[RMDB]
RNA sequence: GGGAACGACUCGAGUAGAGUCGAAAACCCAGCGGAGCCAUGGGAUGCUCUUCCCGAUUCCGUCCAUCCCCCACCCCGAGAGGGUCGCCCAGGAAUGGCGGGACCCCACUCAACUGGGGUCCGCGUUCCAUUUAAUGGAGUUCGCUCCAUUAAAUGGAAAAGAAACAACAACAACAAC
Reactivity to DMS in 0.01 (KOAc 150mM, MgCl2 10mM, bicine 150mM(pH8.5), 24C), signal-to-noise 2, nucleotides 027 to 126: c010c000c010a210g020c030g000g010a050g010c050c100a090u000g030g010g010a050u010g020c160u030c130u000u000c010c010c010g000a120u000u000c040c000g000u000c070c080a110u020c000c010c000c020c030a270c030c020c000c010g000a230g000a140g000g010g000u000c020g040c010c000c020a140g000g010a090a040u000g010g040c020g000g020g000a010c000c010c000c000a010c040u000c280a090a130c230u010g020g010g000g000u000c010c010g000c020g010u000u010
Reactivity to 2A3 in 0.01 (KOAc 150mM, MgCl2 10mM, bicine 150mM(pH8.5), 24C), signal-to-noise 1, nucleotides 027 to 126: c000c000c000a000g020c000g020g020a010g000c000c090a280u150g000g020g010a000u080g090c040u070c100u090u040c000c000c010g070a070u050u030c020c010g020u030c130c000a190u220c010c000c000c010c000a040c000c000c010c010g060a040g040a040g080g000g010u000c010g000c050c000c030a010g090g160a090a030u090g220g050c030g000g000g000a030c030c000c000c000a020c000u190c020a060a220c080u040g000g000g000g000u000c000c000g030c000g000u020u000
Description: An RNA of 177 nucleotides, treated with DMS and 2A3 and read out base by base. It was measured as part of the RMDB library VIROID. For 2A3 the reverse transcriptase was SuperScript II with manganese.